[RMDB]
RNA sequence: GGGAACGACUCGAGUAGAGUCGAAAAGGUGCCAGGCACUGUUCUAGGUACUGGAUUAUAGAGUGAACCAAACACAACCCCUGCCCUUCUGUGGCGUAUAAAUGAGAGGAGAAAGAUAGAAAGCAAACAUAGCCUCAUCAUUCGUGAUGAGGCUAUGAAAAGAAACAACAACAACAAC
Reactivity to 2A3 in 0.01 (KOAc 150mM, MgCl2 10mM, bicine 150mM(pH8.5), 24C), signal-to-noise 1, nucleotides 027 to 126: g010g000u020g030c010c020a000g020g010c090a040c300u170g080u070u030c080u090a130g010g000u030a060c070u030g000g000a020u120u070a070u150a140g180a010g090u030g020a080a010c020c000a080a060a000c000a000c010a010a160c000c000c000c010u020g060c030c000c000u030u190c050u110g190u180g030g000c030g010u150a160u010a100a040a050u090g060a040g030a060g050g000a050g050a060a070a000g050a020u020a050g070a100a180a000g000c000a000a050a070
Reactivity to DMS in 0.01 (KOAc 150mM, MgCl2 10mM, bicine 150mM(pH8.5), 24C), signal-to-noise 3, nucleotides 027 to 126: g020g010u000g000c000c050a090g010g030c060a120c130u000g010u020u000c040u000a120g030g020u000a040c040u000g000g010a170u000u010a130u000a060g010a090g000u010g000a070a090c070c060a060a080a080c110a050c080a060a210c040c010c010c070u000g030c020c020c050u000u000c120u000g000u000g000g010c060g010u000a070u010a030a060a080u010g000a070g010a060g010g000a100g000a050a060a040g010a060u010a070g000a050a050a070g020c100a070a080a120